[RMDB]
RNA sequence: GGGAACGACUCGAGUAGAGUCGAAAAGAUGACAGCACCCCAGGUGACCCGAACCUUGGAGGUCACGCCGCUCCCGCGGUGGUUCACCCGCAAGUACGAUUCGCGUCCGGCAGCUCGUACGGUCACUUCCGAUAAUUAGGUUCGCCUAAUUAUCGGAAAAAGAAACAACAACAACAAC
Reactivity to 2A3 in 0.01 (KOAc 150mM, MgCl2 10mM, bicine 150mM(pH8.5), 24C), signal-to-noise 7, nucleotides 027 to 126: g110a030u180g050a020c040a030g040c040a120c000c000c010c000a020g000g000u010g000a020c030c030c090g010a010a010c000c000u010u030g020g010a010g010g000u000c000a000c010g000c000c000g010c010u170c030c040c070g010c000g000g010u010g000g020u010u020c010a030c010c030c020g070c080a110a040g020u030a030c020g030a070u050u190c070g010c010g080u090c050c020g040g010c010a020g010c010u010c020g010u030a030c010g020g000u070c040a030c060u030
Reactivity to DMS in 0.01 (KOAc 150mM, MgCl2 10mM, bicine 150mM(pH8.5), 24C), signal-to-noise 2, nucleotides 027 to 126: g030a120u000g030a160c080a020g050c090a100c030c000c010c000a000g060g000u020g000a020c000c000c300g000a080a060c010c040u020u030g000g000a300g010g000u000c030a040c010g000c010c000g000c080u040c030c070c140g020c070g000g020u000g020g010u000u010c030a280c070c050c050g000c060a070a130g030u000a040c030g000a090u040u020c060g030c050g000u000c050c080g030g000c010a060g000c040u000c010g060u000a020c000g030g000u060c110a070c090u000

Overview
The record gives the reactivity of an RNA of 177 nucleotides to 2A3 and DMS. The RNA was probed in 150 mM KOAc, 10 mM MgCl2 and 150 mM bicine (pH 8.5) at 24 C. DMS adducts were read by reverse transcription with MarathonRT.